Conditions: 150 mM KOAc, 10 mM MgCl2 and 150 mM bicine (pH 8.5), 24 C.
Structure probing data (2A3 and DMS) for a 177-nucleotide construct.
2A3 adducts were read by reverse transcription with SuperScript II with manganese.
The 2A3 profile rests on 1,312 reads.

RNA sequence: GGGAACGACUCGAGUAGAGUCGAAAACAGCUCGUACGUACCUAGAGCUGGUACGUACAGCGACUAGAGCGAUCUAGCAGGUACCAGCGCUAGGAUCGAUCGUCGUACGGUACGAUCACGACAUGAGGGCUGGGCUUAAGUUCGCUUAAGCCCAGCCAAAAGAAACAACAACAACAAC
Reactivity to 2A3 in 0.01 (KOAc 150mM, MgCl2 10mM, bicine 150mM(pH8.5), 24C), signal-to-noise 1, nucleotides 027 to 126: c000a010g000c010u020c050g040u070a070c020g010u060a070c050c000u010a010g010a020g100c020u000g010g000u000a000c000g100u240a020c030a060g040c080g020a020c040u030a020g010a020g050c000g050a080u000c010u020a000g010c010a000g020g120u020a010c010c000a020g010c020g020c020u000a000g070g050a040u070c060g020a010u030c020g060u020c010g030u090a140c170g020g000u100a020c040g020a050u090c060a000c090g060a030c050a060u100g090a070g000
Reactivity to DMS in 0.01 (KOAc 150mM, MgCl2 10mM, bicine 150mM(pH8.5), 24C), signal-to-noise 1, nucleotides 027 to 126: c050a140g000c010u010c010g030u010a050c060g000u020a150c010c000u010a030g010a130g000c090u010g020g000u000a000c010g020u020a030c120a110g000c020g020a190c040u000a010g020a060g000c300g000a080u000c000u000a000g000c030a170g030g010u000a060c050c000a020g020c010g000c020u000a020g010g000a080u000c040g000a040u020c050g000u010c010g000u000a060c090g000g010u000a000c080g000a080u000c030a150c020g000a040c070a090u000g000a020g030